[RMDB]
The record gives the reactivity of an RNA of 177 nucleotides to 2A3. It was measured as part of the RMDB library OK1LIB. For 2A3, 785 sequencing reads were counted. The RNA was probed in 150 mM KOAc, 10 mM MgCl2 and 150 mM bicine (pH 8.5) at 24 C. Reactivities are given for positions 27 through 126.
RNA sequence: GGGAACGACUCGAGUAGAGUCGAAAAGAAGAGAAUACGGUGUAAGAACAGCCCAACUUACACUGUGCGGCAUAACGGAAACACUGAUGUCGAAAAUUGGGCUGCUCGUGAAUGAACGAAAGAAGAAAGGAGUCCACUGAUUCGUCAGUGGACUCCUAAAAGAAACAACAACAACAAC
Reactivity to 2A3 in 0.01 (KOAc 150mM, MgCl2 10mM, bicine 150mM(pH8.5), 24C), signal-to-noise 2, nucleotides 027 to 126: g020a010a010g030a000g030a100a100u130a080c030g000g000u030g000u000a000a000g030a090a000c030a000g000c000c000c000a010a030c000u000u000a010c020a000c000u020g000u000g030c050g030g000c000a000u080a160a020c030g110g060a100a070a000c170a000c100u100g070a000u000g000u040c020g060a000a070a000a120u090u070g000g000g000c030u000g000c080u030c000g000u040g030a100a300u120g000a000a090c080g020a000a000a200g110a040a000g080a120a180